[RMDB]
RNA sequence: GGGAACGACUCGAGUAGAGUCGAAAACAGCCUGUUCGCCGAAGAGAUCGGUUUCGCACUCUUCCUUGAAGGUCGUCUCGAUAACGCCCGAACGGCCGCCGCCAACGCCCGAAGCGUAGGAAAGGGACGGUGGAAAAUAGUUCGCUAUUUUCCACCGAAAAGAAACAACAACAACAAC
Reactivity to DMS in 0.01 (KOAc 150mM, MgCl2 10mM, bicine 150mM(pH8.5), 24C), signal-to-noise 3, nucleotides 027 to 126: c130a080g030c060c020u000g000u010u010c060g020c050c070g010a060a060g000a060g020a100u000c040g010g010u020u000u000c050g000c170a090c050u000c030u010u010c220c070u000u000g000a090a060g020g000u000c020g020u000c060u010c040g020a080u010a090a090c110g000c100c030c030g010a060a100c100g010g010c030c030g040c060c020g000c030c050a070a040c050g000c000c040c080g010a080a140g010c060g000u000a080g010g000a020a030a090g010g010g020a180
Reactivity to 2A3 in 0.01 (KOAc 150mM, MgCl2 10mM, bicine 150mM(pH8.5), 24C), signal-to-noise 2, nucleotides 027 to 126: c020a000g050c000c000u090g060u070u090c080g020c030c020g030a090a050g060a020g020a170u080c060g060g000u050u080u100c040g000c030a040c010u040c010u050u000c010c020u070u140g070a120a040g060g010u010c010g020u000c030u020c110g050a100u060a220a050c050g040c020c000c000g030a040a010c030g000g000c000c000g040c000c000g060c010c010a040a030c040g030c000c020c050g040a090a010g050c010g050u060a040g000g090a080a050a110g050g030g030a020

An RNA of 177 nucleotides, treated with DMS and 2A3 and read out base by base. The RNA was probed in 150 mM KOAc, 10 mM MgCl2 and 150 mM bicine (pH 8.5) at 24 C. For DMS, 2,468 sequencing reads were counted. Reactivities are given for positions 27 through 126.